[RMDB]
RNA sequence: GGGAACGACUCGAGUAGAGUCGAAAAGGGGUAGAGCACUGACAAGGCUAGGGGGCACACCCGCUUACCAAACCUUAUCAAACUCCGAAUACCGUGCAAUGGAACGUGGCAGUGAGACAGUGGGGGAGAAGGUAGGUUCUUUCGAGAACCUACCUUCAAAAGAAACAACAACAACAAC
Reactivity to DMS in 0.01 (KOAc 150mM, MgCl2 10mM, bicine 150mM(pH8.5), 24C), signal-to-noise 2, nucleotides 027 to 126: g050g020g000g000u000a060g030a060g000c010a080c060u010g010a050c090a010a050g020g020c010u020a300g000g010g000g000g030c020a040c050a120c190c050c090g000c000u000u030a040c030c000a080a100a200c010c020u000u000a070u000c020a030a050a060c030u010c000c000g010a080a060u020a060c020c030g000u060g000c060a090a080u050g000g030a010a110c190g000u000g000g000c130a030g000u020g040a120g010a020c110a090g020u000g010g010g000g000g020a020
Reactivity to 2A3 in 0.01 (KOAc 150mM, MgCl2 10mM, bicine 150mM(pH8.5), 24C), signal-to-noise 2, nucleotides 027 to 126: g050g000g010g020u140a050g010a020g080c000a000c170u020g010a000c020a050a000g000g010c020u010a020g010g000g000g040g010c020a030c020a040c100c050c010g000c000u110u070a190c000c000a020a000a030c010c000u010u020a010u100c020a040a050a080c000u000c000c000g000a100a020u090a120c000c060g070u040g020c020a040a100u130g040g040a130a050c050g000u050g000g000c020a000g020u040g080a000g010a030c060a060g000u000g000g000g000g000g000a060
An RNA of 177 nucleotides, treated with DMS and 2A3 and read out base by base.
The reactions ran in a buffer of 150 mM KOAc, 10 mM MgCl2 and 150 mM bicine (pH 8.5), at 24 C.
Source: RMDB library RFM100, as collected in RNAgym.